[RMDB]
RNA sequence: GGGAACGACUCGAGUAGAGUCGAAAAGAGAAGGGAGGAUCGGAUGGGAAGAGUAUAUCCUACGGGAAUCCGCGGUCUCCCCUUAUGUCCAGUCCCUCCCCGGUCCGAACGAAGGGGGACUCCGGGACACCCUGCAUGCUGGGGACGAAGCCGCCCCGUUUACCUGGUAGUUCGCUACCAGGUAAACAAAAGAAACAACAACAACAAC
Reactivity to 2A3 in 0.01 (KOAc 150mM, MgCl2 10mM, bicine 150mM(pH8.5), 24C), signal-to-noise 1, nucleotides 027 to 156: g130a020g010a000a070g030g000g010a030g000g020a060u090c060g030g000a040u050g050g020g070a160a060g040a020g120u110a050u070a060u120c020c010u030a020c140g000g000g040a060a060u010c020c050g040c070g020g030u050c040u040c040c010c000c000u040u100a070u240g060u000c020c070a030g000u000c010c010c000u090c030c010c010c010g020g060u130c050c060g060a110a140c020g030a050a050g000g000g000g060g000a020c010u010c050c080g010g000g010a000c020a110c000c000c060u060g040c030a100u090g020c070u140g000g000g000g060a060c050g040a000a060g050c000c000g010c040c000c000c000
Source information: The record gives the reactivity of an RNA of 207 nucleotides to 2A3. The 2A3 profile rests on 609 reads. Conditions: 150 mM KOAc, 10 mM MgCl2 and 150 mM bicine (pH 8.5), 24 C.